The record gives the reactivity of an RNA of 177 nucleotides to 2A3 and DMS. DMS adducts were read by reverse transcription with MarathonRT. Values cover nucleotides 27 to 126. For 2A3 the reverse transcriptase was SuperScript II with manganese.
RNA sequence: GGGAACGACUCGAGUAGAGUCGAAAACCCUACCUUACUCGAAAACCCGUCGAUGAAGACCACUAAAUGACGAAUCCUAAUAACCCAAUGGGUUUCAUUGCGGAUAUGAGGCAUUUGUCUGAGCGGGCUAAAGCGAUGUCUUCGGACAUCGCUUUAGAAAAGAAACAACAACAACAAC
Reactivity to 2A3 in 0.01 (KOAc 150mM, MgCl2 10mM, bicine 150mM(pH8.5), 24C), signal-to-noise 3, nucleotides 027 to 126: c000c000c000u030a100c000c050u060u070a090c050u030c090g040a030a080a050a110c020c000c000g020u050c050g020a090u170g120a120a050g060a090c010c010a050c110u210a040a130a140u180g000a010c000g000a000a000u000c000c000u020a060a090u050a050a020c000c000c050a020a030u050g000g090g110u110u190u300c000a000u000u010g020c120g000g000a010u010a020u060g010a030g000g020c040a030u010u010u000g000u000c000u040g020a020g010c030g020g000g000
Reactivity to DMS in 0.01 (KOAc 150mM, MgCl2 10mM, bicine 150mM(pH8.5), 24C), signal-to-noise 2, nucleotides 027 to 126: c000c000c010u000a140c170c060u020u030a020c030u000c090g010a040a150a070a070c060c050c040g020u010c020g010a090u010g000a170a060g000a110c080c090a020c100u050a080a050a060u020g000a010c040g000a000a000u000c040c010u000a050a000u030a000a020c020c000c000a000a020u000g000g010g050u010u060u050c010a000u000u020g000c150g010g020a120u000a000u000g000a000g000g050c100a010u000u000u000g010u000c010u000g000a070g000c050g020g000g000